An RNA of 207 nucleotides, treated with DMS and 2A3 and read out base by base.
[RMDB]
RNA sequence: GGGAACGACUCGAGUAGAGUCGAAAAAGGGCAGCCCGUCUUGCCUGAGAGUACCACGGCUUGGGUAAAGGCGUCGACUAGUGGUGAACGUCGGCAGGCGAUGACUGUGACCUGUCGGUGUAUUGCAGUCUACCAAAGCGAGGGGCGUGUCUGUUUGCAAUACAUGCGAGUUCGCUCGCAUGUAUUGAAAAGAAACAACAACAACAAC
Reactivity to DMS in 0.01 (KOAc 150mM, MgCl2 10mM, bicine 150mM(pH8.5), 24C), signal-to-noise 2, nucleotides 027 to 156: a120g010g010g020c020a040g030c000c010c030g040u010c000u000u010g030c000c000u010g000a040g020a130g010u000a150c090c060a140c020g000g010c000u000u000g030g030g040u000a030a060a060g020g000c020g000u010c050g010a100c070u000a140g040u000g030g030u000g000a080a040c030g020u000c000g030g000c000a020g010g010c010g020a130u020g010a140c080u020g040u040g010a030c000c010u000g010u000c040g020g000u050g010u000a090u000u010g000c000a080g020u000c020u000a300c020c020a040a070a100g020c070g010a130g000g010g000g020c010g000u010g020u000c010u000g000u020u010u010g000
Reactivity to 2A3 in 0.01 (KOAc 150mM, MgCl2 10mM, bicine 150mM(pH8.5), 24C), signal-to-noise 4, nucleotides 027 to 156: a000g030g010g000c020a010g000c000c000c000g030u030c010u020u020g000c000c000u010g000a020g000a000g030u100a110c030c030a030c080g040g000c010u010u020g010g000g010u040a080a060a030g030g000c020g030u050c020g030a060c020u070a070g020u020g050g020u030g060a090a020c000g000u000c010g010g020c000a010g000g020c030g040a070u170g080a060c130u140g080u060g130a190c000c000u000g010u010c000g010g010u000g000u040a040u000u130g010c010a000g010u000c040u030a010c010c040a080a100a030g140c080g040a060g030g010g010g000c110g060u050g020u000c060u040g050u040u070u060g040
DMS adducts were read by reverse transcription with MarathonRT. For 2A3, 3,260 sequencing reads were counted. Reactivities are rounded to 0.1 and cut off at 0 and 3. 2A3 adducts were read by reverse transcription with SuperScript II with manganese. The data come from the RNA Mapping Database (RMDB), library ARCHII. The reactions ran in a buffer of 150 mM KOAc, 10 mM MgCl2 and 150 mM bicine (pH 8.5), at 24 C. High 2A3 reactivity points to a flexible backbone, as in loops and unpaired stretches.